[RMDB]
RNA sequence: GGGAACGACUCGAGUAGAGUCGAAAAGCUAUCUUAGUGAAGUAUGGUUGCUGUGAUGUUACCUACUUUGAAAAUAAACUCUGGUUUGAUUUUGUUGAAAAUCCCAGUGUUAUUGGUGUUUAUCAUAAGACGAACGAUAGUUCGCUAUCGUUCGUCUAAAAGAAACAACAACAACAAC
Reactivity to DMS in 0.01 (KOAc 150mM, MgCl2 10mM, bicine 150mM(pH8.5), 24C), signal-to-noise 2, nucleotides 027 to 126: g020c040u010a040u000c060u000u000a120g020u000g010a020a040g010u000a020u010g030g010u000u000g010c020u000g030u020g000a130u000g010u010u000a030c010c000u000a030c010u000u010u000g000a100a060a080a100u000a080a050a050c030u010c030u000g000g000u000u020u000g010a030u000u000u000u000g030u000u000g000a060a050a050a060u000c000c000c000a060g010u000g000u000u000a070u010u000g010g020u000g000u000u010u000a090u010c090a070u010a130